RNA sequence: GGGAACGACUCGAGUAGAGUCGAAAACAUAAGACCUCAGAGCUAAUGAGCCACAUACCUACCCAAGGUGAAAGCUCCUUGUCUCGCAAUGUGUAACUCAUGAUUCUCAUGACCCCUGGUUGGAGAGCGCGCUAACACGCCUUCGGGCGUGUUAGAACAGCUAAUUCAUCUUCGGAUGAAUUAGCUGAAAAGAAACAACAACAACAAC
Reactivity to 2A3 in 0.01 (KOAc 150mM, MgCl2 10mM, bicine 150mM(pH8.5), 24C), signal-to-noise 1, nucleotides 027 to 156: c010a050u120a090a000g020a020c000c010u010c090a030g000a010g000c020u130a110a000u100g000a010g030c020c020a060c040a130u220a070c010c040u050a040c020c010c000a020a060g000g010u070g050a100a010a000g050c010u040c000c000u060u050g050u040c030u010c080g030c100a030a100u050g000u010g010u060a050a040c040u000c020a050u040g070a090u280u000c060u020c040a100u110g010a080c000c000c000c030u040g020g020u030u040g070g010a100g010a030g100c080g000c010g000c050u000a000a000c000a000c010g010c030c050u040u070c170g030g000g000c010g000u000g000u010u000a000g000a000a000
Reactivity to DMS in 0.01 (KOAc 150mM, MgCl2 10mM, bicine 150mM(pH8.5), 24C), signal-to-noise 1, nucleotides 027 to 156: c050a150u010a000a170g010a060c040c010u010c040a110g000a180g000c090u010a060a120u000g010a070g020c040c000a060c080a140u020a050c060c000u000a180c090c120c070a120a110g050g000u000g000a060a120a170g020c040u000c010c020u000u010g010u000c030u000c050g000c060a090a040u000g000u030g000u010a020a060c050u000c010a030u000g000a240u000u000c050u000c010a020u010g010a110c000c030c030c030u000g020g070u000u010g020g000a080g030a070g010c040g010c110g010c040u020a000a020c010a000c000g000c000c010u000u020c240g050g000g030c020g000u000g010u000u000a000g000a100a240